The record gives the reactivity of an RNA of 177 nucleotides to 2A3 and DMS.
2A3 adducts were read by reverse transcription with SuperScript II with manganese.
In probing experiments dimethyl sulfate is read out at A N1 and C N3, which are open when not base-paired.
DMS adducts were read by reverse transcription with MarathonRT.
Conditions: 150 mM KOAc, 10 mM MgCl2 and 150 mM bicine (pH 8.5), 24 C.
RNA sequence: GGGAACGACUCGAGUAGAGUCGAAAAUCUGCGAACCGUGGCCGACCGCCAGAUAAGCGUUCAUUCCCAGUUCGCGCAUCUGCUGUUCGCCGAUCACGCGGGUGAUAACCUUUUUGCUGUAGCUGUCAUAAUCAAGAUUAUUCGUAAUCUUGAUUAUAAAAGAAACAACAACAACAAC
Reactivity to 2A3 in 0.01 (KOAc 150mM, MgCl2 10mM, bicine 150mM(pH8.5), 24C), signal-to-noise 9, nucleotides 027 to 126: u020c020u020g010c010g030a060a040c040c030g080u110g030g000c020c030g020a060c010c020g060c060c010a010g010a040u060a040a030g000c010g000u010u010c020a080u060u050c000c000c000a000g010u010u010c010g000c000g010c040a030u000c010u030g000c010u020g030u080u030c020g000c020c010g040a070u110c020a010c080g040c020g020g020g010u030g030a070u100a140a110c010c000u040u070u040u110u140g040c050u060g020u090a050g030c020u030g040u090c020
Reactivity to DMS in 0.01 (KOAc 150mM, MgCl2 10mM, bicine 150mM(pH8.5), 24C), signal-to-noise 9, nucleotides 027 to 126: u010c030u000g010c020g010a090a070c110c110g020u010g010g010c100c060g010a040c060c050g010c150c020a020g010a040u000a070a280g000c010g010u000u000c010a080u010u000c010c010c010a140g000u000u000c010g010c010g010c260a030u000c010u000g000c050u000g000u000u000c220g010c020c020g000a060u010c090a080c040g010c050g000g000g010u000g000a110u010a090a120c040c010u000u010u010u000u000g010c020u000g010u000a050g010c020u000g000u010c150